An RNA of 177 nucleotides, treated with DMS and read out base by base.

RNA sequence: GGGAACGACUCGAGUAGAGUCGAAAACCUCGAGAUGGCCGAUCUCCACGCCCGCCAGAUCCGCGGUCGUGGGUUCAUGGUCGUCCCGAUCAGGGACCCCACAGCGUGGGAAGACGGCGACCGCGAGAUUACCGUCGGGUUUCGACCCGACGGUAAUAAAAGAAACAACAACAACAAC
Reactivity to DMS in 0.01 (KOAc 150mM, MgCl2 10mM, bicine 150mM(pH8.5), 24C), signal-to-noise 1, nucleotides 027 to 126: c070c000u070c000g010a040g010a050u000g000g020c010c000g000a180u010c000u000c010c020a000c030g020c070c000c010g030c000c150a180g000a120u010c210c300g010c010g010g000u000c150g050u020g000g030g010u000u000c000a010u000g000g020u000c000g010u000c090c040c050g010a020u000c050a020g060g020g010a020c010c020c010c010a080c170a100g020c030g030u030g000g000g000a150a040g020a100c040g020g010c000g000a010c040c000g000c030g000a050g000